[RMDB]
RNA sequence: GGGAACGACUCGAGUAGAGUCGAAAAGAUUCAGUCCUUGUUAAUAAUGUUUUUAAAGCCGCGCGAGUGCCAUCUUAUAACAUUGUUUAUGAUGUGAAUGAUGACACCAAGAGUAAGAUGGUGGUUAAAAUAGGAACAUCAUUCGACUUUGAUGGUGCACAAAGUCAGUUUUCGAACUGACUUUGUGAAAAGAAACAACAACAACAAC
Reactivity to DMS in 0.01 (KOAc 150mM, MgCl2 10mM, bicine 150mM(pH8.5), 24C), signal-to-noise 2, nucleotides 027 to 156: g010a210u000u000c120a140g010u000c040c030u000u010g010u000u000a050a060u000a080a150u010g020u000u010u000u000u000a090a080a200g000c010c050g010c080g000c120g000a080g030u000g010c040c000a040u000c030u020u000a110u000a120a030c010a060u000u000g010u000u000u000a060u020g020a040u000g030u000g020a050a120u000g000a040u000g020a060c020a030c010c000a040a120g000a120g040u000a040a100g010a100u000g010g080u010g020g000u000u010a040a030a120a220u000a180g020g000a050a100c000a020u000c020a040u000u000c070g010a030c040u000u000u000g020a070u000g000g010u010g030
Reactivity to 2A3 in 0.01 (KOAc 150mM, MgCl2 10mM, bicine 150mM(pH8.5), 24C), signal-to-noise 3, nucleotides 027 to 156: g070a040u140u070c020a020g090u010c000c000u070u040g030u050u040a110a070u130a150a110u130g020u020u010u000u010u070a140a110a020g000c060c000g010c030g040c060g120a080g050u050g010c000c010a010u010c020u040u060a070u010a120a030c010a060u040u040g090u120u170u060a120u210g050a030u080g030u000g020a000a030u020g030a000u030g000a010c000a010c030c000a040a030g050a020g080u040a070a030g030a030u030g000g030u010g050g020u110u160a050a060a100a080u140a080g030g110a030a030c000a000u010c000a010u040u060c070g020a020c020u040u050u040g070a090u080g020g030u040g000